Structure probing data (2A3 and DMS) for a 177-nucleotide construct. The DMS profile rests on 3,974 reads. Source: RMDB library OK1LIB, as collected in RNAgym. The reactions ran in a buffer of 150 mM KOAc, 10 mM MgCl2 and 150 mM bicine (pH 8.5), at 24 C.

RNA sequence: GGGAACGACUCGAGUAGAGUCGAAAAGUGAACGCCAGCGCACCCACGUAGCUGGCGAUGCUGUGCGAUGCCCGCAGCCCCGGGAUAACGCCGGUGAACCGCCUGGUGACGGCCACGUAUUCGGCAAUGCAGUACACUAGUUCGCUAGUGUACUGCAAAAAGAAACAACAACAACAAC
Reactivity to 2A3 in 0.01 (KOAc 150mM, MgCl2 10mM, bicine 150mM(pH8.5), 24C), signal-to-noise 3, nucleotides 027 to 126: g150u120g010a120a000c000g010c010c000a020g010c050g030c040a120c000c020c040a030c100g050u030a060g010c000u010g010g000c030g000a010u040g000c040u040g030u020g000c010g060a070u100g020c000c050c040g030c040a030g010c000c020c010c040g070g000g000a080u080a220a030c090g000c040c020g000g000u050g030a050a060c020c020g010c040c060u070g000g000u090g050a080c010g010g030c000c000a050c070g020u050a110u030u110c000g010g000c020a010a030
Reactivity to DMS in 0.01 (KOAc 150mM, MgCl2 10mM, bicine 150mM(pH8.5), 24C), signal-to-noise 3, nucleotides 027 to 126: g020u010g070a090a130c050g010c000c010a000g020c000g040c020a070c030c000c020a100c120g000u000a150g000c000u000g010g000c010g020a020u010g010c060u000g000u020g000c060g010a120u050g000c010c020c040g020c020a120g000c080c020c040c000g000g010g000a160u050a090a120c220g000c050c010g000g030u010g000a050a090c120c020g000c050c010u030g000g030u030g000a060c030g010g010c040c080a010c070g060u010a060u030u000c050g010g000c120a120a060